[RMDB]
RNA sequence: GGGAACGACUCGAGUAGAGUCGAAAAGAAGGUGUUCAUUGCCAAAUAAAUAAAGAUGAUUGCGUGGAUGCACUUUGUGAAGCAGGUAGCACGUGCGUGGAUCAUCUCGCCAAAUAUACCUGUGAAACUCAUUUACUCCAUUCGUGGAGUAAAUGAGAAAAGAAACAACAACAACAAC
Reactivity to DMS in 0.01 (KOAc 150mM, MgCl2 10mM, bicine 150mM(pH8.5), 24C), signal-to-noise 4, nucleotides 027 to 126: g020a090a050g010g010u000g010u000u000c060a060u000u010g030c020c150a070a060a100u010a030a090a110u020a070a090a080g000a070u010g010a060u000u010g010c060g020u000g010g000a060u000g000c000a050c010u010u010u000g020u010g000a130a210g000c050a020g000g000u000a060g010c080a030c200g000u000g000c010g020u000g010g000a100u010c130a050u010c020u000c060g000c040c050a030a080a100u010a100u010a040c010c010u000g010u000g010a060a080a130
Reactivity to 2A3 in 0.01 (KOAc 150mM, MgCl2 10mM, bicine 150mM(pH8.5), 24C), signal-to-noise 5, nucleotides 027 to 126: g050a020a010g020g000u020g010u070u060c070a070u100u290g000c030c020a050a060a030u180a030a090a030u250a060a100a020g110a050u090g010a030u010u110g050c030g000u040g030g040a050u020g010c030a070c170u080u150u090g090u060g090a040a030g040c030a010g000g000u030a020g010c050a000c110g100u140g020c010g010u050g050g030a080u150c020a050u040c050u000c020g000c000c000a000a070a000u180a010u020a050c000c000u030g010u020g090a070a020a010